Conditions: 150 mM KOAc, 10 mM MgCl2 and 150 mM bicine (pH 8.5), 24 C. Structure probing data (2A3) for a 207-nucleotide construct. For 2A3 the reverse transcriptase was SuperScript II with manganese. Source: RMDB library OK3TST, as collected in RNAgym. Reactivities are given for positions 27 through 156.
[RMDB]
RNA sequence: GGGAACGACUCGAGUAGAGUCGAAAAUCGAGCCGGCCGCCCCGGCCGAGGUGACCGUGAUCGCUUGCGCGGCUGCCAAGCUCGACGAGCCCGCCCCGGCGGCCGAGCUGUACACGAGCGCCAAUUUCCGGCUGAUGCUGCGCGCGGCUCGCGCUCAACCUGCUACACUGUUCGCAGUGUAGCAGGUAAAAGAAACAACAACAACAAC
Reactivity to 2A3 in 0.01 (KOAc 150mM, MgCl2 10mM, bicine 150mM(pH8.5), 24C), signal-to-noise 1, nucleotides 027 to 156: u080c040g000a010g010c010c010g100g110c010c050g000c010c000c030c000g020g000c000c020g000a070g000g000u020g000a270c010c010g000u010g040a140u140c160g010c200u100u170g030c040g000c000g080g020c030u050g010c000c000a020a010g010c000u020c040g300a250c170g010a010g020c010c060c090g120c080c060c030c070g000g010c000g020g000c000c000g000a010g030c000u000g010u070a020c020a010c040g020a070g030c030g000c000c040a040a090u190u110u070c080c000g010g000c000u040g020a080u020g070c080u070g000c000g000c030g010c010g060g000c020u010c020g000c040g030c000u030c000a030

The 2A3 profile rests on 660 reads.